This 177-nucleotide RNA was probed chemically with 2A3 and DMS.
Conditions: 150 mM KOAc, 10 mM MgCl2 and 150 mM bicine (pH 8.5), 24 C.
The 2A3 profile rests on 1,989 reads.
The data come from the RNA Mapping Database (RMDB), library TTRDEL.
2A3 adducts were read by reverse transcription with SuperScript II with manganese.
[RMDB]
RNA sequence: GGGAACGACUCGAGUAGAGUCGAAAAGAUAUGGAUUGAAUAGGGAGAAGGUCGGAAACGAUGCUUCGAGGAUCUAUCCAAUCCUAAGUCAAACCUCGUUAGGCCUCUUCGGAGGCCUAACGAGGAAGUACACUCAAUUCUUCGGAAUUGAGUGUACAAAAGAAACAACAACAACAAC
Reactivity to 2A3 in 0.01 (KOAc 150mM, MgCl2 10mM, bicine 150mM(pH8.5), 24C), signal-to-noise 1, nucleotides 027 to 126: g000a010u070a020u110g020g010a010u010u000g010a000a040u010a000g000g030g020a050g010a040a000g000g000u010c000g050g030a020a080a070c020g010a010u120g300c000u000u010c000g040a050g000g000a020u000c010u000a000u030c010c000a000a010u020c000c000u020a100a000g050u040c070a110a010a100c000c010u030c000g000u000u000a010g020g030c030c070u050c050u120u090c300g080g000a050g000g100c000c000u010a000a010c030g000a000g000g020a000a000
Reactivity to DMS in 0.01 (KOAc 150mM, MgCl2 10mM, bicine 150mM(pH8.5), 24C), signal-to-noise 1, nucleotides 027 to 126: g020a030u010a300u000g010g000a040u000u010g000a020a020u000a020g000g010g000a060g020a030a000g010g010u010c000g010g000a150a060a230c000g000a010u000g010c000u000u000c000g000a060g000g000a030u000c010u010a010u000c000c010a010a000u010c000c000u000a030a080g000u000c020a110a130a170c000c000u000c000g000u000u020a020g000g000c000c000u000c000u000u010c200g040g000a000g010g000c010c000u000a000a000c000g000a000g010g000a000a030